RNA sequence: GGGAACGACUCGAGUAGAGUCGAAAAGAUAUGGACCCGCAGGACAUGCUGACACCUCGGAAACGAGGUGGGUAGCAACAGCCUGAUGGGUCCUAAGUCAAAAUCAUGUUUGUUCGCAAACAUGAAAUCAGGACAAUACCUUCGGGUAUUGUCCUGAAAAAGAAACAACAACAACAAC
Reactivity to 2A3 in 0.01 (KOAc 150mM, MgCl2 10mM, bicine 150mM(pH8.5), 24C), signal-to-noise 1, nucleotides 027 to 126: g010a000u020a020u050g000g020a000c000c000c030g000c000a010g000g000a010c120a160u300g000c000u000g000a010c000a010c020c000u000c000g010g000a020a080a000c020g000a000g000g000u010g000g000g030u050a030g000c060a090a080c090a150g010c010c000u120g070a300u120g000g020g020u030c000c000u000a000a000g000u010c000a000a020a050a300u100c000a000u000g010u000u000u000g110u000u030c300g070c180a000a010a010c000a000u000g030a140a030a030
Reactivity to DMS in 0.01 (KOAc 150mM, MgCl2 10mM, bicine 150mM(pH8.5), 24C), signal-to-noise 1, nucleotides 027 to 126: g020a030u000a040u020g000g010a020c000c020c000g020c000a020g000g020a030c040a300u000g010c000u000g030a140c000a010c000c010u000c010g010g000a020a000a050c000g010a000g010g010u000g000g010g000u000a010g030c000a110a110c140a070g000c000c010u000g010a070u030g010g010g020u010c010c000u010a000a040g000u000c020a100a120a190a130u000c000a000u000g000u000u000u000g020u000u000c280g020c000a000a010a020c000a000u000g000a020a070a100

The record gives the reactivity of an RNA of 177 nucleotides to 2A3 and DMS. The 2A3 profile rests on 2,049 reads. The data come from the RNA Mapping Database (RMDB), library TTRDES. Values cover nucleotides 27 to 126. Conditions: 150 mM KOAc, 10 mM MgCl2 and 150 mM bicine (pH 8.5), 24 C.